The record gives the reactivity of an RNA of 207 nucleotides to DMS and 2A3. For DMS the reverse transcriptase was MarathonRT.
RNA sequence: GGGAACGACUCGAGUAGAGUCGAAAACAAUAAAGUUUUCUUUAUUGGGGUUGCGGACAUAUCAUAACGAAGAGGUAUCGUAAUUGAAGAGGUUUGGAAAGACCCACCACAGAAGGUAAUAGUCCUGUAUGUUAAACGAGAAGACUUUAGAUAUGAAGAGGUAAUCAUUAUUCGUAAUGAUUACCUCAAAAGAAACAACAACAACAAC
Reactivity to DMS in 0.01 (KOAc 150mM, MgCl2 10mM, bicine 150mM(pH8.5), 24C), signal-to-noise 3, nucleotides 027 to 156: c020a020a060u010a020a020a070g010u010u020u010u000c010u000u010u000a080u010u000g000g020g040g040u010u010g030c030g000g010a140c050a080u000a050u020c030a160u000a070a090c060g020a110a080g010a130g030g000u000a100u000c040g040u000a050a110u000u010g000a040a080g010a300g050g020u010u000u000g040g070a300a070a070g000a020c020c010c000a060c020c020a170c060a100g010a060a040g000g020u000a020a080u010a150g000u010c000c020u000g020u000a090u010g010u010u000a040a060a090c030g010a080g020a080a150g000a060c020u000u000u000a050g000a070u000a040u000g000a070a240
Reactivity to 2A3 in 0.01 (KOAc 150mM, MgCl2 10mM, bicine 150mM(pH8.5), 24C), signal-to-noise 3, nucleotides 027 to 156: c010a000a040u090a100a050a030g030u130u090u160u200c010u010u130u060a100u040u040g010g000g010g020u010u060g040c040g020g030a010c010a020u080a010u010c040a080u080a210a050c140g020a030a020g010a020g080g040u030a020u020c010g010u000a010a040u000u030g010a000a010g150a150g000g000u020u020u010g010g000a000a000a000g000a000c010c000c010a000c000c000a010c010a050g030a040a000g000g000u020a000a010u000a020g000u010c000c000u000g000u010a010u030g020u030u040a130a250a020c000g000a010g000a050a010g020a010c000u050u030u050a030g010a020u020a000u070g030a060a080

The reactions ran in a buffer of 150 mM KOAc, 10 mM MgCl2 and 150 mM bicine (pH 8.5), at 24 C.